[RMDB]
RNA sequence: GGGAACGACUCGAGUAGAGUCGAAAAUUAGCAUUACCAUAUCCUAUUUGGCAAUGAAUUUCACUUUAGACAAUCCAAUCUUAAGAACAUACUCUAGUAUAUGAAAUUCAUUGCCAAAUAGGAUAUGGGACGAAUAAGUUUUCGAACUUAUUCGUCCAAAAGAAACAACAACAACAAC
Reactivity to DMS in 0.01 (KOAc 150mM, MgCl2 10mM, bicine 150mM(pH8.5), 24C), signal-to-noise 8, nucleotides 027 to 126: u020u020a100g020c150a100u010u010a230c080c000a010u000a000u000c000c000u000a000u000u000u000g000g010c000a010a000u000g000a010a000u000u000u000c000a120c050u000u000u000a010g010a010c100a080a110u020c200c170a080a160u000c040u000u000a060a090g000a100a100c110a030u000a040c100u010c120u010a090g000u000a010u010a100u010g000a000a010a010u000u000c000a000u000u000g000c000c000a000a000a000u000a000g000g000a000u000a000u000g000
Reactivity to 2A3 in 0.01 (KOAc 150mM, MgCl2 10mM, bicine 150mM(pH8.5), 24C), signal-to-noise 1, nucleotides 027 to 126: u090u070a080g060c070a070u130u110a080c000c000a000u010a010u020c010c000u000a020u000u030u000g010g000c000a000a000u000g020a000a000u000u010u000c000a040c020u010u000u010a010g000a020c040a070a110u080c030c040a020a020u010c040u030u060a020a000g030a050a030c020a090u030a060c010u070c070u180a070g010u020a040u010a010u050g010a000a000a000u000u000c000a010u000u000g000c000c000a000a000a000u000a000g000g000a000u000a010u000g000

This 177-nucleotide RNA was probed chemically with DMS and 2A3. Source: RMDB libraries RFM100 and RFMREP, as collected in RNAgym. Values cover nucleotides 27 to 126. For DMS the reverse transcriptase was MarathonRT. Conditions: 150 mM KOAc, 10 mM MgCl2 and 150 mM bicine (pH 8.5), 24 C.